[RMDB]
RNA sequence: GGGAACGACUCGAGUAGAGUCGAAAAGAUAUGGAAACGUAACAUCGUGCGGCAUCUAUGAAGUCGGAAACGAUGGAGAUGUCGCACGUGGUUUCCUAAGUCAAAGUACGAAGUUCGCUUCGUACAAGCAAAAGCAAAGCUUCGGCUUUGCUUUUGCAAAAGAAACAACAACAACAAC
Reactivity to DMS in 0.01 (KOAc 150mM, MgCl2 10mM, bicine 150mM(pH8.5), 24C), signal-to-noise 1, nucleotides 027 to 126: g010a060u010a300u010g000g010a020a000a000c030g020u000a090a030c100a000u000c000g030u000g010c020g050g000c000a010u000c000u010a220u030g000a090a150g000u000c000g010g010a180a050a280c010g000a010u000g000g000a020g000a060u000g030u000c000g030c010a010c010g010u000g000g000u000u000u010c000c000u000a050a140g020u010c020a000a090a140g000u000a030c010g000a030a000g010u010u010c300g010c030u000u000c010g040u000a020c020a090a080